Conditions: 150 mM KOAc, 10 mM MgCl2 and 150 mM bicine (pH 8.5), 24 C. An RNA of 177 nucleotides, treated with 2A3 and DMS and read out base by base. The data come from the RNA Mapping Database (RMDB), library OK2TRN.

[RMDB]
RNA sequence: GGGAACGACUCGAGUAGAGUCGAAAAGGCCGGCCACGGCAACCGAUAGGCGCGCGCGUCCAACCCGGCUGCCAGGAUCACCACUUGUCGCACUCCGCCGUCCGUGGCAGUGCGGAAGUAGUCGUCGAAUUGUUGGAGAGUUCGCUCUCCAACAAUUAAAAGAAACAACAACAACAAC
Reactivity to 2A3 in 0.01 (KOAc 150mM, MgCl2 10mM, bicine 150mM(pH8.5), 24C), signal-to-noise 1, nucleotides 027 to 126: g040g030c020c050g000g060c030c030a070c070g000g000c020a000a030c030c030g060a080u060a220g080g000c030g010c020g020c040g040c020g090u040c010c030a050a020c000c000c040g000g000c010u040g020c000c010a050g050g000a040u050c000a040c050c000a020c030u040u120g180u170c050g010c000a000c020u050c080c070g060c030c020g170u190c050c070g060u080g020g000c060a020g030u020g000c040g020g020a010a010g000u040a020g000u050c070g020u020c010g060
Reactivity to DMS in 0.01 (KOAc 150mM, MgCl2 10mM, bicine 150mM(pH8.5), 24C), signal-to-noise 2, nucleotides 027 to 126: g040g020c040c000g000g020c050c040a110c100g030g010c040a070a030c060c010g000a090u010a180g010g020c030g000c090g030c190g010c040g020u000c020c020a090a160c230c060c000g020g010c010u000g010c020c020a100g000g000a070u000c180a110c040c030a040c020u000u000g000u000c000g010c000a030c010u000c100c090g000c020c120g000u010c170c240g000u030g010g020c020a020g010u000g000c020g000g000a010a040g020u000a070g020u000c130g010u000c090g000